[RMDB]
RNA sequence: GGGAACGACUCGAGUAGAGUCGAAAAGAUAUGGACGACGUAACUUCGACGAAGUAUCGUAACAUCACCUCAAGGUCGGAAACGACCUUGAGGUGUGGAUACAGAGAAGGAUAAGUCGUCCUAAGUCGUUGCGUAGUACGUUCGCGUACUACGCAACAAAAGAAACAACAACAACAAC
Reactivity to DMS in 0.01 (KOAc 150mM, MgCl2 10mM, bicine 150mM(pH8.5), 24C), signal-to-noise 1, nucleotides 027 to 126: g000a030u000a040u000g010g010a040c000g030a040c010g010u000a110a300c010u000u000c000g010a300c150g010a140a060g000u000a040u000c000g100u050a200a300c270a120u000c000a020c000c010u000c000a030a010g030g050u000c000g000g000a000a020a080c020g030a030c000c000u000u000g010a000g000g000u000g020u000g010g000a020u000a000c010a010g000a000g010a030a060g010g010a070u000a130a230g000u000c010g010u000c000c010u000a000a020g000u000c020
Conditions: 150 mM KOAc, 10 mM MgCl2 and 150 mM bicine (pH 8.5), 24 C. An RNA of 177 nucleotides, treated with DMS and read out base by base. The DMS profile rests on 714 reads.